Structure probing data (2A3 and DMS) for a 177-nucleotide construct. For 2A3 the reverse transcriptase was SuperScript II with manganese. Conditions: 150 mM KOAc, 10 mM MgCl2 and 150 mM bicine (pH 8.5), 24 C. DMS adducts were read by reverse transcription with MarathonRT. The data come from the RNA Mapping Database (RMDB), library OK2TRN. The DMS profile rests on 3,730 reads. Values cover nucleotides 27 to 126.

[RMDB]
RNA sequence: GGGAACGACUCGAGUAGAGUCGAAAAGUAAAGAAAGAAUUCGACACAAUGGGGUUGCGUCACCUAUAGUUUUCAUUUCCUCAAAUGCAACUCAAGGUGCUCAGCUUGAUAAAGGGAGAGAGGGAGGGGUUCGUAUUAUUUUCGAAUAAUACGAACCAAAAGAAACAACAACAACAAC
Reactivity to 2A3 in 0.01 (KOAc 150mM, MgCl2 10mM, bicine 150mM(pH8.5), 24C), signal-to-noise 3, nucleotides 027 to 126: g030u050a000a080a060g080a070a110a030g060a160a170u190u120c080g110a030c000a010c040a090a100u120g000g030g000g100u020u030g020c000g070u080c010a030c010c000u090a060u060a130g020u000u030u100u170c030a040u000u050u020c050c000u110c040a040a030a010u050g000c010a010a010c010u010c050a010a010g030g010u020g020c000u030c040a010g010c020u030u100g030a020u180a140a070a010g030g030g000a130g000a010g010a050g060g000g020a150g020g040
Reactivity to DMS in 0.01 (KOAc 150mM, MgCl2 10mM, bicine 150mM(pH8.5), 24C), signal-to-noise 5, nucleotides 027 to 126: g000u000a050a060a120g000a130a070a140g010a120a150u000u010c080g010a100c100a060c100a110a080u010g010g000g010g010u000u000g020c060g000u010c050a020c030c020u000a080u000a050g000u000u000u000u010c030a040u000u000u000c100c120u010c240a060a040a030u000g010c300a020a000c030u000c090a130a060g010g000u000g000c060u000c030a050g010c030u000u010g010a110u010a030a070a040g000g010g000a060g000a040g000a070g000g000g000a090g020g020